[RMDB]
RNA sequence: GGGAACGACUCGAGUAGAGUCGAAAAGGUGCAGGUCAUGCCGAUGAACCCGCUACUCGACCAGACGCGAUGGUGCGUGCUGUCGUCGCGGUGGAAGGAUCUCGAGACCGCGCAGGCGCCGCUCAUCAAGGACGCCGGCGUGACGUGCCGGGCGUACGACGGAGCAAUUUUUCGAAAUUGCUCCGUCAAAAGAAACAACAACAACAAC
Reactivity to 2A3 in 0.01 (KOAc 150mM, MgCl2 10mM, bicine 150mM(pH8.5), 24C), signal-to-noise 2, nucleotides 027 to 156: g090g060u120g010c020a010g030g010u020c000a010u010g030c060c000g050a020u100g050a040a080c000c000c000g020c040u100a130c000u040c080g090a050c000c060a020g030a050c060g030c110g020a040u120g020g140u190g030c000g070u150g070c070u210g020u010c010g040u060c010g000c040g000g030u030g000g020a080a230g030g050a270u050c070u120c080g090a070g060a000c000c020g000c000g010c060a080g000g040c020g000c000c000g030c030u050c000a070u020c020a000a050g020g000a000c050g010c030c000g000g000c000g020u050g010a030c020g020u050g000c010c000g040g020g000c030g000u010a020c060
Overview:
Chemical mapping of a 207-nucleotide RNA with 2A3.